[RMDB]
RNA sequence: GGGAACGACUCGAGUAGAGUCGAAAAGAUAUGGACUAGCUGGUUCAAGCGAGGAUCAUGCGGAGACUAUGACUCGGAAACGAGUCACGAAUCUCCCAUGGGAGCUUGAACCAGCUAGUCCUAAGUCCUAACUGUGAUUCUUCGGAAUCACAGUUAGAAAAGAAACAACAACAACAAC
Reactivity to DMS in 0.01 (KOAc 150mM, MgCl2 10mM, bicine 150mM(pH8.5), 24C), signal-to-noise 2, nucleotides 027 to 126: g000a090u000a300u000g030g000a030c000u000a010g010c000u000g000g000u000u010c000a000a000g010c000g020a140g020g010a030u020c000a000u000g000c300g060g010a030g010a020c100u000a190u010g000a000c000u010c000g000g010a090a140a230c000g010a000g020u000c000a000c110g010a110a220u000c010u000c000c010c010a010u000g000g000g000a020g010c010u010u000g000a000a000c000c000a000g000c010u000a010g000u000c000c000u000a010a050g000u000c020